An RNA of 177 nucleotides, treated with DMS and 2A3 and read out base by base. For DMS the reverse transcriptase was MarathonRT. The reactions ran in a buffer of 150 mM KOAc, 10 mM MgCl2 and 150 mM bicine (pH 8.5), at 24 C. The data come from the RNA Mapping Database (RMDB), library OK2TRN. The 2A3 profile rests on 14,160 reads.
[RMDB]
RNA sequence: GGGAACGACUCGAGUAGAGUCGAAAAACAGCCCAGGAGCGUGGGCAAGCCUGAGCGCUCCCCUAUAGCAAACACUGUUGGAUGGAUUAGAGGGGCAGUGGAUGCUGGUGGGCACAACCAGCAGGUGCCAUGCAGAUAGGUUCGCCUAUCUGCAUGGAAAAGAAACAACAACAACAAC
Reactivity to DMS in 0.01 (KOAc 150mM, MgCl2 10mM, bicine 150mM(pH8.5), 24C), signal-to-noise 6, nucleotides 027 to 126: a120c200a140g000c000c010c000a130g010g010a040g000c050g030u010g010g000g000c060a060a100g020c020c010u010g010a140g020c040g010c010u000c000c010c050c030u010a120u000a030g030c050a040a050a250c050a020c020u000g010u010u010g020g020a120u000g000g010a220u000u000a080g010a140g000g000g000g010c010a020g020u000g010g010a180u000g010c010u000g000g010u000g010g000g000c100a060c120a070a090c020c040a080g000c030a040g000g010u000g010
Reactivity to 2A3 in 0.01 (KOAc 150mM, MgCl2 10mM, bicine 150mM(pH8.5), 24C), signal-to-noise 6, nucleotides 027 to 126: a000c020a010g030c000c000c020a010g010g030a040g010c040g010u060g030g050g020c050a030a030g060c000c010u050g050a030g030c030g000c010u040c000c010c010c000u140a130u110a080g010c020a010a020a010c010a010c040u030g040u080u070g170g090a180u110g060g050a120u130u180a150g050a050g130g060g010g000c010a010g000u010g030g000a010u020g000c000u000g010g010u050g010g020g000c050a030c020a100a080c030c020a020g060c030a040g030g040u040g070